[RMDB]
RNA sequence: GGGAACGACUCGAGUAGAGUCGAAAACAAUUUACUGUAAUUAAGAGGGUUUAUUUGUGGACUCUCAAUGCUAUUCCAUUGACCUACACAUCUAUCUUUAUGCCAGUAACACACUGUUUUGAUUACCGUAGUUUUAUAGUAAGUUUUGAAAUCAAGAGAUGAGGAUGAUUUUCGAAUCAUCCUCAUCAAAAGAAACAACAACAACAAC
Reactivity to 2A3 in 0.01 (KOAc 150mM, MgCl2 10mM, bicine 150mM(pH8.5), 24C), signal-to-noise 3, nucleotides 027 to 156: c040a040a090u090u090u070a040c000u020g020u060a030a080u070u070a060a060g010a060g040g020g040u070u080u130a150u110u100u090g060u050g040g010a020c010u010c000u030c140a020a020u020g030c080u130a120u170u100c030c010a010u000u040g070a080c010c010u040a010c020a000c010a020u010c040u060a140u050c040u070u080u010a040u070g050c020c000a020g030u040a040a000c020a010c010a000c170u090g030u040u020u070u080g050a040u090u070a040c020c030g030u030a020g010u060u080u090u140a060u090a010g060u150a080a090g010u020u030u030u050g030a030a010a050u100c020a020a020g030a020
Reactivity to DMS in 0.01 (KOAc 150mM, MgCl2 10mM, bicine 150mM(pH8.5), 24C), signal-to-noise 1, nucleotides 027 to 156: c060a070a060u010u020u000a050c030u000g010u000a060a080u020u000a070a170g000a050g060g000g000u000u000u000a050u010u000u000g060u000g000g000a130c140u000c050u010c010a040a070u000g070c080u010a170u010u010c100c030a030u000u000g020a030c040c010u030a050c040a050c020a060u000c030u010a030u000c060u000u000u000a070u000g000c100c020a160g020u000a040a040c070a030c100a020c060u010g000u000u000u000u010g000a160u000u000a030c010c010g010u000a100g010u000u000u000u000a040u000a020g020u020a030a060g010u000u000u000u000g000a070a080a170u020c080a080a140g000a300
Annotation
Structure probing data (2A3 and DMS) for a 207-nucleotide construct. The data come from the RNA Mapping Database (RMDB), library OK3TST. The RNA was probed in 150 mM KOAc, 10 mM MgCl2 and 150 mM bicine (pH 8.5) at 24 C.